[RMDB]
RNA sequence: GGGAACGACUCGAGUAGAGUCGAAAAGAUAUGGACUAUCUUAGAUGUUCGUUGAUCAAUAGUCGGAAACGACUAUUGGGAGAACGCUAAGAGUAGUCCUAAGUCAAAACGACCGUUCGCGGUCGAACAUAAGUCCCACGUUCGCGUGGGACUUAUGAAAAGAAACAACAACAACAAC
Reactivity to DMS in 0.01 (KOAc 150mM, MgCl2 10mM, bicine 150mM(pH8.5), 24C), signal-to-noise 1, nucleotides 027 to 126: g000a010u000a300u020g000g000a010c000u000a050u000c000u000u000a010g010a070u000g020u000u000c000g000u000u030g000a050u000c010a020a020u000a010g010u010c010g000g000a130a100a200c010g000a040c000u000a000u020u000g010g000g010a020g000a000a000c010g000c000u000a010a000g000a010g060u010a010g000u000c000c000u000a030a100g010u000c040a060a040a180a200c060g000a010c000c000g030u010u010c260g000c000g000g020u000c000g010a040a130
Reactivity to 2A3 in 0.01 (KOAc 150mM, MgCl2 10mM, bicine 150mM(pH8.5), 24C), signal-to-noise 2, nucleotides 027 to 126: g070a000u070a030u160g000g010a020c020u030a090u090c020u000u100a300g120a300u300g050u010u000c030g160u300u020g020a010u010c000a010a000u000a000g000u020c000g040g010a070a110a090c020g020a010c000u000a000u000u000g000g010g020a080g000a000a000c020g080c030u010a020a000g050a020g070u070a010g020u000c010c000u000a050a000g010u030c050a050a000a050a110c030g000a010c000c030g010u050u120c300g000c060g140g010u000c000g020a060a000

The record gives the reactivity of an RNA of 177 nucleotides to DMS and 2A3. The RNA was probed in 150 mM KOAc, 10 mM MgCl2 and 150 mM bicine (pH 8.5) at 24 C. Reactivities are rounded to 0.1 and cut off at 0 and 3. The DMS profile rests on 1,253 reads. Reactivities are given for positions 27 through 126.